[RMDB]
RNA sequence: GGGAACGACUCGAGUAGAGUCGAAAAAAGGUGUAUCUAUACAUUACAUUUCUAAAAGAUUAGGUCAUAAAAAUAUAGCAAUAACUACAUCCGUGUAUUCUCAUUUGUUAGAAGAAAAAUUUAAUGACAAUACGUGACCAUUCGUGGUCACGUAUUGAAAAGAAACAACAACAACAAC
Reactivity to DMS in 0.01 (KOAc 150mM, MgCl2 10mM, bicine 150mM(pH8.5), 24C), signal-to-noise 1, nucleotides 027 to 126: a080a100g020g010u010g000u020a000u010c110u000a160u010a050c020a080u000u000a100c070a110u010u000u000c030u000a040a070a160a150g000a120u000u010a090g000g030u010c020a080u020a020a040a070a060a090u020a020u020a010g000c090a050a040u020a080a080c090u020a020c040a030u020c070c130g000u000g010u000a090u010u000c040u010c030a070u010u000u000g000u000u000a020g020a160a130g000a030a070a030a060a050u000u000u020a030a070u000g000a220
Reactivity to 2A3 in 0.01 (KOAc 150mM, MgCl2 10mM, bicine 150mM(pH8.5), 24C), signal-to-noise 1, nucleotides 027 to 126: a000a000g210g000u040g040u160a190u090c050u040a120u000a110c020a040u060u120a090c000a140u010u230u010c090u120a080a080a160a120g020a180u040u230a050g020g000u090c090a020u180a160a150a040a110a040u140a040u070a090g020c040a100a100u070a110a030c020u050a050c000a040u010c090c040g070u050g000u060a160u120u000c040u000c020a090u000u030u130g090u130u110a040g050a100a060g130a040a180a090a050a040u300u280u120a230a280u060g040a000